[RMDB]
RNA sequence: GGGAACGACUCGAGUAGAGUCGAAAACGCAGCUACCGAGGUGCGGUGGUGCUGGUGACGCAUGAUCCCGGGGCGGCCGCGGCGCUCGGUCCCCAACGGGUGGUGCUGUUGCCCGACGGCACCGAGGCAUCCCUCCGCCAUUCGUGGCGGAGGGAUGAAAAGAAACAACAACAACAAC
Reactivity to DMS in 0.01 (KOAc 150mM, MgCl2 10mM, bicine 150mM(pH8.5), 24C), signal-to-noise 1, nucleotides 027 to 126: c090g020c070a100g000c090u000a080c040c040g000a250g020g020u000g000c030g010g030u020g010g060u000g020c040u000g010g000u000g020a040c030g000c040a020u020g000a120u010c020c000c000g030g000g000g030c180g000g000c020c010g050c010g000g000c090g000c040u000c010g070g010u000c000c010c000c040a140a090c000g020g020g000u000g000g040u000g010c020u010g010u000u000g030c000c020c080g000a040c040g010g020c000a000c020c000g000a160g010g010
Reactivity to 2A3 in 0.01 (KOAc 150mM, MgCl2 10mM, bicine 150mM(pH8.5), 24C), signal-to-noise 1, nucleotides 027 to 126: c070g000c110a060g060c060u130a030c020c040g020a080g000g030u040g030c120g020g130u050g050g170u150g060c070u020g000g040u030g020a000c020g080c050a030u050g040a140u160c000c000c000g030g000g000g010c170g020g000c000c020g030c050g140g020c080g020c070u040c010g000g010u020c040c010c020c010a170a100c040g070g000g000u070g000g000u000g030c120u250g000u020u010g000c000c000c000g010a000c030g040g000c000a000c000c010g000a010g000g050